[RMDB]
RNA sequence: GGGAACGACUCGAGUAGAGUCGAAAACACAUUCGUUUGGCUGCUGAGGUUGGACUGUUGACCCGAAAUAUACAAAUUCAGCCUGACGUAUCAUGUAGGGGGAGACUGUUUGUGGGGUCCUUCAGGACCCUUGCCGCACUUUCGAGUGCGGCAAGGGAAAAGAAACAACAACAACAAC
Reactivity to DMS in 0.01 (KOAc 150mM, MgCl2 10mM, bicine 150mM(pH8.5), 24C), signal-to-noise 5, nucleotides 027 to 126: c070a080c170a130u000u000c040g010u000u000u000g010g010c010u000g010c300u000g020a090g020g020u010u000g020g000a120c110u010g020u010u000g010a150c040c010c020g010a050a100a080u000a090u010a090c140a070a070a170u000u000c050a050g000c020c010u000g000a080c060g010u000a050u000c130a060u000g010u000a070g010g010g000g000g000a110g010a070c090u000g000u010u010u000g020u010g010g010g000g010u000c020c050u000u010c160a100g010g010a140
Reactivity to 2A3 in 0.01 (KOAc 150mM, MgCl2 10mM, bicine 150mM(pH8.5), 24C), signal-to-noise 1, nucleotides 027 to 126: c010a000c000a040u070u110c040g010u000u000u040g010g010c000u000g000c010u060g040a040g030g040u020u070g060g040a070c020u100g070u130u080g070a020c000c000c050g050a040a140a000u280a010u010a030c080a010a090a040u060u140c000a000g000c000c010u030g020a000c020g000u010a050u130c150a080u110g070u120a060g010g050g010g020g000a050g030a030c040u040g080u130u040u020g160u130g040g000g040g020u010c020c020u030u110c020a030g010g040a080
The record gives the reactivity of an RNA of 177 nucleotides to DMS and 2A3. Values cover nucleotides 27 to 126. For 2A3 the reverse transcriptase was SuperScript II with manganese. The 2A3 profile rests on 1,035 reads.